[RMDB]
RNA sequence: GGGAACGACUCGAGUAGAGUCGAAAAUGUAUUCGGCUUAUACAAGAAUAUGUGCACAGGUAGUCCUUCUAUAGUUGAAUUUAAUAGGUUGGCUACCUGUGACUGGACUGAAAGUGGUGAUUACACCUGACAGUCGCGUUCGCGCGACUGAAAAGAAACAACAACAACAAC
Reactivity to DMS in 0.01 (KOAc 150mM, MgCl2 10mM, bicine 150mM(pH8.5), 24C), signal-to-noise 2, nucleotides 027 to 129: u060g020u050a030u090u000c020g000g020c000u140u000a180u000a000c040a070a260g020a060a090u030a110u000g000u000g020c030a040c010a010g010g040u020a000g000u000c000c090u000u000c000u000a000u030a030g020u070u100g030a160a200u000u000u000a110a050u000a000g000g050u000u000g010g000c010u040a010c020c000u000g020u020g000a020c020u030g010g000a110c040u000g020a050a160a230g010u050g020g020u020g000a160u000u060a110c010a000c000c020u030g010a300
Reactivity to 2A3 in 0.01 (KOAc 150mM, MgCl2 10mM, bicine 150mM(pH8.5), 24C), signal-to-noise 3, nucleotides 027 to 129: u190g050u070a190u000u000c050g000g050c020u030u090a170u000a080c110a070a000g060a070a000u110a000u190g050u220g050c000a010c000a000g000g000u020a010g000u110c000c010u000u000c020u020a030u000a050g090u070u060g050a220a160u170u190u100a020a110u070a060g140g000u030u030g010g010c030u030a010c000c000u020g000u000g000a000c000u000g000g000a020c000u000g070a190a050a070g050u130g030g000u020g040a150u110u300a040c000a000c000c000u010g000a000